The record gives the reactivity of an RNA of 177 nucleotides to DMS and 2A3.
DMS adducts were read by reverse transcription with MarathonRT.
It was measured as part of the RMDB library OK2TST.
The DMS profile rests on 5,054 reads.

RNA sequence: GGGAACGACUCGAGUAGAGUCGAAAAGAGCUUGAACGCUUGAAAGAAGAAGCUGAUAAAAAGCAAUCUUUACCGGAGCCUAGAUUGGUAGGUGAUGCUAGUGGUCAAGAAGAACCAACGGCAGAAACCGUGUAACAAUAUUCGUAUUGUUACACGGAAAAGAAACAACAACAACAAC
Reactivity to DMS in 0.01 (KOAc 150mM, MgCl2 10mM, bicine 150mM(pH8.5), 24C), signal-to-noise 5, nucleotides 027 to 126: g010a100g010c010u000u000g010a110a160c160g000c010u000u000g000a080a130a140g010a060a120g010a080a190g020c010u010g010a170u010a070a080a090a120a020g000c030a120a110u000c010u000u000u010a100c050c030g020g010a240g010c010c020u000a040g000a160u000u010g010g020u010a020g000g010u000g000a150u010g020c020u000a050g010u000g000g000u000c030a070a090g010a080a120g010a100a080c010c010a020a050c070g000g000c030a060g010a140a060a130
Reactivity to 2A3 in 0.01 (KOAc 150mM, MgCl2 10mM, bicine 150mM(pH8.5), 24C), signal-to-noise 5, nucleotides 027 to 126: g010a000g010c020u070u080g040a090a020c050g000c020u030u040g090a190a130a070g080a050a020g030a040a020g020c040u070g080a130u290a150a180a040a010a000g000c010a030a260u000c010u010u030u040a070c010c020g080g070a030g020c010c000u070a090g040a270u070u210g110g020u070a020g010g040u060g030a050u050g010c000u020a030g070u020g020g020u010c020a060a060g090a090a020g030a250a000c000c000a040a020c010g030g000c010a010g090a050a030a010

Conditions: 150 mM KOAc, 10 mM MgCl2 and 150 mM bicine (pH 8.5), 24 C.